[RMDB]
Description:
Source: RMDB library OK1LIB, as collected in RNAgym. Structure probing data (2A3 and DMS) for a 177-nucleotide construct. The 2A3 profile rests on 25,177 reads. High 2A3 reactivity points to a flexible backbone, as in loops and unpaired stretches. The reactions ran in a buffer of 150 mM KOAc, 10 mM MgCl2 and 150 mM bicine (pH 8.5), at 24 C. 2A3 adducts were read by reverse transcription with SuperScript II with manganese.

RNA sequence: GGGAACGACUCGAGUAGAGUCGAAAAUAACACUUCACUCGCUGCCAACCUGAACAUACUGUACUAUCCUUUUCAAUCCCUUCGCAUGGAGGCCGUGCUGCAGAAGGCCAGGGAGGCCGCGGUGGAGACUGGACCAUAUAUUCGUAUAUGGUCCAGUAAAAGAAACAACAACAACAAC
Reactivity to 2A3 in 0.01 (KOAc 150mM, MgCl2 10mM, bicine 150mM(pH8.5), 24C), signal-to-noise 9, nucleotides 027 to 126: u110a030a030c030a020c050u000u000c000a020c050u300c080g000c010u000g000c000c000a020a030c010c000u020g030a070a020c020a060u240a100c040u050g010u040a030c010u060a070u120c020c030u080u090u050u140c090a130a160u100c020c020c000u110u100c090g060c140a090u170g060g010a020g040g000c030c030g090u070g030c070u040g000c010a010g020a150a030g070g000c020c000a000g010g000g000a010g000g000c000c020g000c000g000g000u000g000g000a010g010
Reactivity to DMS in 0.01 (KOAc 150mM, MgCl2 10mM, bicine 150mM(pH8.5), 24C), signal-to-noise 5, nucleotides 027 to 126: u040a140a130c130a190c010u000u010c000a020c000u050c020g040c000u010g030c010c010a040a300c010c010u000g010a070a210c060a040u020a110c020u010g010u010a090c080u010a100u000c010c000u010u030u000u020c100a090a090u020c010c020c020u000u000c070g000c050a060u010g010g000a060g000g020c070c060g000u000g010c110u010g030c030a030g000a300a110g020g010c190c010a030g010g000g000a300g000g010c000c080g020c020g000g000u020g000g010a010g020